This 177-nucleotide RNA was probed chemically with DMS and 2A3. 2A3 adducts were read by reverse transcription with SuperScript II with manganese. The reactions ran in a buffer of 150 mM KOAc, 10 mM MgCl2 and 150 mM bicine (pH 8.5), at 24 C. DMS (dimethyl sulfate) methylates the pairing face of unpaired adenines and cytosines.
RNA sequence: GGGAACGACUCGAGUAGAGUCGAAAAAAAGAAGGGAGACAGGGACCACUGAUAAGACAUGGUCUAUGGUAUUCAUCAGACUUGGCUUCUUUAUCUCCUGCUUCAUCAGAGGCUGGACUCUCCUCAGAUAGAUUGAGGGAUUCGUCCCUCAAUCUAUAAAAGAAACAACAACAACAAC
Reactivity to DMS in 0.01 (KOAc 150mM, MgCl2 10mM, bicine 150mM(pH8.5), 24C), signal-to-noise 4, nucleotides 027 to 126: a060a050a090g000a110a070g000g000g000a030g010a020c150a040g020g010g010a080c050c050a070c060u010g010a040u000a030a030g010a090c050a030u000g000g020u010c150u010a050u010g010g000u000a090u000u000c100a020u010c040a030g000a100c160u010u010g020g010c080u010u010c000u010u000u000a060u010c060u000c000c010u000g000c030u000u000c020a100u010c260a090g000a040g000g010c030u000g010g010a080c080u000c040u010c020c000u010c110a110g000
Reactivity to 2A3 in 0.01 (KOAc 150mM, MgCl2 10mM, bicine 150mM(pH8.5), 24C), signal-to-noise 2, nucleotides 027 to 126: a020a020a030g130a020a090g020g020g020a030g000a040c030a040g020g000g030a020c000c000a000c070u030g010a030u030a060a050g020a030c030a060u100g080g050u070c080u110a030u080g060g030u090a180u120u120c020a020u030c040a010g090a140c050u040u020g050g010c000u030u000c000u040u150u040a080u040c030u000c000c000u010g020c010u040u030c030a200u070c010a060g010a000g060g000c070u050g020g020a070c020u010c010u020c030c010u020c000a020g020